[RMDB]
RNA sequence: GGGAACGACUCGAGUAGAGUCGAAAAGACCAUUUGUUACAUGGGUCGAACAAUGUGGAAUAUUUCUGUUUCAAGGGCGGUCUAUCUUUGAAAUAUUCGAUACCGUCAUAUGACUCAUAGUCAAGCCCCAUACCACUCGAUUCGUCGAGUGGUAUGGAAAAGAAACAACAACAACAAC
Reactivity to 2A3 in 0.01 (KOAc 150mM, MgCl2 10mM, bicine 150mM(pH8.5), 24C), signal-to-noise 7, nucleotides 027 to 126: g080a010c020c010a060u070u090u090g090u070u070a040c030a050u030g000g020g030u010c010g010a100a010c080a100a120u190g070u140g130g050a070a010u050a080u160u210u070c110u110g120u040u120u090c050a040a030g040g000g000c000g000g030u010c060u050a040u000c040u020u100u090g130a090a090a060u300a100u080u100c010g000a000u010a030c010c000g010u000c010a010u010a010u120g000a000c000u000c020a010u050a070g060u060c030a040a060g020c000c000
Reactivity to DMS in 0.01 (KOAc 150mM, MgCl2 10mM, bicine 150mM(pH8.5), 24C), signal-to-noise 3, nucleotides 027 to 126: g000a200c000c030a120u000u030u020g000u020u010a060c050a030u000g000g020g010u000c020g010a100a060c150a060a050u000g010u010g010g000a030a080u020a020u020u040u000c100u010g000u010u000u020c080a090a050g010g000g000c030g000g000u010c130u010a020u030c010u020u030u000g020a020a020a160u020a080u000u000c040g010a030u010a010c050c080g000u010c060a050u030a070u040g010a010c030u010c020a060u040a080g010u000c060a080a050g010c090c060